The data come from the RNA Mapping Database (RMDB), libraries RFM100 and RFMREP.
This 177-nucleotide RNA was probed chemically with 2A3 and DMS.
High DMS reactivity at an A or C suggests that its Watson-Crick edge is free.
DMS adducts were read by reverse transcription with MarathonRT.
Conditions: 150 mM KOAc, 10 mM MgCl2 and 150 mM bicine (pH 8.5), 24 C.
[RMDB]
RNA sequence: GGGAACGACUCGAGUAGAGUCGAAAAGAAGUAAGCAGUUGAUUUUUGUGAUAACCGUCAAAUCGACCACUUAGGGUCACCACUUAACGCUGUCCACAAACGGCCUGGCGACCACUUAAGGCUGUAAAAAUACGUGACAAUUCGUUGUCACGUAUUUAAAAGAAACAACAACAACAAC
Reactivity to 2A3 in 0.01 (KOAc 150mM, MgCl2 10mM, bicine 150mM(pH8.5), 24C), signal-to-noise 9, nucleotides 027 to 126: g090a040a010g060u210a050a040g010c050a020g030u050u060g130a230u040u050u040u130u100g070u050g050a100u080a130a070c040c030g070u050c050a030a060a090u080c040g030a040c000c030a030c040u040u080a090g080g020g000u050c010a020c030c010a030c010u070u080a050a010c030g000c030u030g030u060c050c030a100c050a070a090a020c050g010g000c000c000u010g010g010c030g050a040c000c020a070c040u050u070a040a000g020g000c030u040g040u110a040a100
Reactivity to DMS in 0.01 (KOAc 150mM, MgCl2 10mM, bicine 150mM(pH8.5), 24C), signal-to-noise 9, nucleotides 027 to 126: g010a120a100g020u020a050a100g010c060a060g010u000u000g000a070u010u000u000u010u010g020u020g010a120u020a060a090c120c060g010u000c070a040a060a070u020c060g000a060c020c080a080c050u000u010a060g000g010g010u010c060a110c030c040a040c130u010u010a030a070c090g000c010u010g010u010c050c050a060c180a040a090a070c060g010g000c010c030u000g010g020c050g000a100c070c030a050c060u020u020a070a050g000g000c030u000g010u020a020a060